[RMDB]
RNA sequence: GGGAACGACUCGAGUAGAGUCGAAAAUUAAAAUGUGCGUCCCUCCCGAACCUGCGCGCUCGGUCGAAGAGGACGACCACAGCCGAUAGAGGACUGACGGUCUUCGGUCAAGGGAAAAAGAAAAAAACAAACGUACGAGGUUCGCCUCGUACGUUUGAAAAGAAACAACAACAACAAC
Reactivity to DMS in 0.01 (KOAc 150mM, MgCl2 10mM, bicine 150mM(pH8.5), 24C), signal-to-noise 1, nucleotides 027 to 126: u000u000a080a040a060a150u000g020u000g000c050g000u030c000c000c040u000c060c020c010g000a040a080c020c010u010g060c220g010c140g070c040u000c040g040g020u010c150g010a110a170g020a200g070g010a050c020g010a120c030c090a030c100a050g090c070c100g000a140u000a150g050a030g020g010a030c020u010g020a080c300g000g000u000c010u010u020c000g020g000u000c020a040a120g000g000g000a050a120a070a150a160g040a000a000a000a160a040a070a100

Source information: Source: RMDB library M2PK90, as collected in RNAgym. Chemical mapping of a 177-nucleotide RNA with DMS. For DMS, 468 sequencing reads were counted. The reactions ran in a buffer of 150 mM KOAc, 10 mM MgCl2 and 150 mM bicine (pH 8.5), at 24 C.